[RMDB]
The data come from the RNA Mapping Database (RMDB), libraries RFM100 and RFMREP. The record gives the reactivity of an RNA of 177 nucleotides to DMS and 2A3.
RNA sequence: GGGAACGACUCGAGUAGAGUCGAAAACUCAGUAAAUGCGCUGUUUUCCAUCAGGAAAUACAGGCUACCGAAACAUGCGUCUCUAUGCAGGCGACAACCGGGAGGUUGACGUCCCUGCGAUAAGCCACGCAUAUGAAGCAUUCGUGCUUCAUAUGCGAAAAGAAACAACAACAACAAC
Reactivity to DMS in 0.01 (KOAc 150mM, MgCl2 10mM, bicine 150mM(pH8.5), 24C), signal-to-noise 4, nucleotides 027 to 126: c020u000c030a120g010u010a050a130a080u030g010c020g010c010u010g000u000u010u000u020c010c000a170u040c300a150g000g010a010a020a020u030a010c010a010g000g020c000u010a080c130c090g010a110a120a100c180a040u010g000c040g010u000c020u000c020u000a110u030g010c000a010g010g000c020g020a060c010a010a000c000c000g010g040g010a180g010g010u000u000g010a080c030g010u020c120c000c000u000g000c040g000a050u010a060a040g010c070c170a120
Reactivity to 2A3 in 0.01 (KOAc 150mM, MgCl2 10mM, bicine 150mM(pH8.5), 24C), signal-to-noise 7, nucleotides 027 to 126: c020u010c030a030g060u150a030a150a130u140g010c230g010c040u000g040u000u000u010u000c040c040a140u190c160a190g010g010a000a010a010u160a030c010a000g010g000c010u030a050c020c070g090a080a090a040c070a050u140g030c040g080u060c010u000c000u090a030u190g000c010a000g000g010c000g020a030c000a000a000c010c000g020g120g020a150g030g000u020u000g020a020c020g060u070c070c020c000u010g000c010g080a020u020a110a010g020c040c020a010